The data come from the RNA Mapping Database (RMDB), libraries RFM100 and RFMREP. The record gives the reactivity of an RNA of 177 nucleotides to DMS and 2A3. For 2A3 the reverse transcriptase was SuperScript II with manganese.
[RMDB]
RNA sequence: GGGAACGACUCGAGUAGAGUCGAAAAACGGUAGGUACGCCUACCGAGCGGCCCCACGCACCAGGGUAAGAGAGACUCUCGCUUCCUGCCCUGGCCCGAGGGACCGAAGAUGCCUUACGAGGCAUCACGUCCAUACAAUCUUCGGAUUGUAUGGACGAAAAGAAACAACAACAACAAC
Reactivity to DMS in 0.01 (KOAc 150mM, MgCl2 10mM, bicine 150mM(pH8.5), 24C), signal-to-noise 5, nucleotides 027 to 126: a100c000g000g000u020a000g000g030u030a070c250g050c020c000u000a000c010c010g000a040g010c020g000g000c010c000c000c000a130c040g030c300a090c010c010a010g000g000g010u000a060a020g010a070g000a040g020a140c180u030c160u020c130g000c030u000u010c050c020u010g000c000c000c010u000g010g010c040c300c000g000a120g000g010g020a030c000c000g000a060a080g010a000u000g000c000c000u000u000a100c110g020a100g000g010c000a000u000c000a140
Reactivity to 2A3 in 0.01 (KOAc 150mM, MgCl2 10mM, bicine 150mM(pH8.5), 24C), signal-to-noise 9, nucleotides 027 to 126: a000c000g000g010u010a000g000g020u060a030c250g090c020c000u000a000c000c000g000a010g000c000g000g000c010c000c000c010a040c020g020c010a030c000c000a000g030g110g010u080a300a010g120a020g010a020g080a150c040u110c010u030c210g060c070u070u050c010c000u000g000c000c000c000u000g000g010c010c030c010g030a050g010g010g000a020c010c000g010a020a040g000a000u000g000c000c000u040u040a080c230g070a010g000g000c000a000u000c000a000